An RNA of 177 nucleotides, treated with 2A3 and DMS and read out base by base. Conditions: 150 mM KOAc, 10 mM MgCl2 and 150 mM bicine (pH 8.5), 24 C. Reactivities are given for positions 27 through 126. For DMS the reverse transcriptase was MarathonRT.

RNA sequence: GGGAACGACUCGAGUAGAGUCGAAAAGCAGGAGGAUGCACUAUACAGGACGGAUGAUGGCAUAUUCUGAAAUCACUACGUCACCAUCCAUAAACGUCUUCACUGAGGGAUAUGUCGAUGACUUCGCCUACGCUGAACUAUUCGUAGUUCAGCGUAGAAAAGAAACAACAACAACAAC
Reactivity to 2A3 in 0.01 (KOAc 150mM, MgCl2 10mM, bicine 150mM(pH8.5), 24C), signal-to-noise 8, nucleotides 027 to 126: g050c040a020g020g040a020g030g000a040u070g070c050a000c100u070a060u120a200c080a060g060g070a010c040g020g020a070u020g010a030u040g020g000c040a030u020a080u170u080c060u100g100a060a100a050u140c080a040c150u170a020c100g020u020c000a010c040c000a010u000c000c000a020u250a040a090a010c040g030u000c000u030u040c070a110c200u060g020a060g050g010g010a040u020a040u160g060u040c050g040a080u090g020a030c010u050u010c060g060c000
Reactivity to DMS in 0.01 (KOAc 150mM, MgCl2 10mM, bicine 150mM(pH8.5), 24C), signal-to-noise 4, nucleotides 027 to 126: g000c040a060g000g010a000g030g000a110u000g000c140a080c090u020a080u020a110c190a090g000g000a090c070g030g000a060u010g000a080u010g000g010c040a050u020a070u010u010c100u020g000a080a080a090u040c130a030c100u040a050c100g040u000c010a020c060c000a030u010c040c040a110u010a030a050a220c080g000u000c000u000u000c060a050c100u000g010a040g020g000g000a040u010a070u020g000u000c040g020a070u030g000a100c120u000u000c110g000c150